[RMDB]
RNA sequence: GGGAACGACUCGAGUAGAGUCGAAAAGAUAUGGACGCGGUACAGCUCGAAGAACUAGCUCGGAAACGAGCUAGGGAGAGCGUACCUGCGUCCUAAGUCAAACCUCACGACCUUCGGGUCGUGAGGAUCUACUGCGUCAGUUCGCUGACGCAGUAGAAAAAGAAACAACAACAACAAC
Reactivity to DMS in 0.01 (KOAc 150mM, MgCl2 10mM, bicine 150mM(pH8.5), 24C), signal-to-noise 2, nucleotides 027 to 126: g010a070u020a300u000g000g010a010c050g020c000g000g000u000a010c020a110g070c000u010c040g020a130a250g000a170a150c000u010a000g000c000u000c010g020g010a140a070a200c010g000a000g000c000u000a000g000g010g000a060g000a010g020c070g020u000a000c000c010u020g030c000g000u000c010c010u000a020a050g000u000c040a120a120a190c000c000u020c000a000c000g010a040c000c000u000u040c210g020g010g010u000c020g000u000g000a010g000g020a000
Reactivity to 2A3 in 0.01 (KOAc 150mM, MgCl2 10mM, bicine 150mM(pH8.5), 24C), signal-to-noise 2, nucleotides 027 to 126: g020a000u060a060u150g010g000a000c000g000c030g000g030u030a030c070a150g000c030u020c050g290a300a030g020a020a010c010u000a000g000c000u000c020g000g010a090a070a020c000g000a020g000c000u000a000g010g000g000a030g000a000g000c020g000u020a000c000c010u010g020c000g000u000c000c000u000a020a020g010u010c020a070a050a150c010c000u010c010a000c010g010a020c010c020u120u210c300g160g000g010u000c000g000u000g020a000g000g000a010